This 177-nucleotide RNA was probed chemically with 2A3. The 2A3 profile rests on 254 reads. For 2A3 the reverse transcriptase was SuperScript II with manganese. Conditions: 150 mM KOAc, 10 mM MgCl2 and 150 mM bicine (pH 8.5), 24 C.

RNA sequence: GGGAACGACUCGAGUAGAGUCGAAAAUACUGCACAUAGCUUUUAAUAUUCCGUUCAAAGGAAAGGGGCAUACAAUUGAACAAUCUGUAAUAGUACUUUUAACCAGCUAUGCUAAAAGUCUAGUAGGCCUCACAUCGCACUUCGGUGCGAUGUGAGGAAAAGAAACAACAACAACAAC
Reactivity to 2A3 in 0.01 (KOAc 150mM, MgCl2 10mM, bicine 150mM(pH8.5), 24C), signal-to-noise 1, nucleotides 027 to 126: u090a000c000u090g040c000a000c000a000u180a000g040c120u060u180u060u190a130a090u210a230u220u070c080c000g160u300u300c000a000a040a060g030g030a000a000a300g000g000g230g000c000a000u170a060c040a040a260u120u240g110a190a000c150a050a050u150c130u000g130u000a020a000u000a080g130u040a100c010u000u000u000u270a000a080c040c000a090g000c030u000a000u000g000c000u000a170a040a040a040g000u080c060u080a000g010u020a040g050g050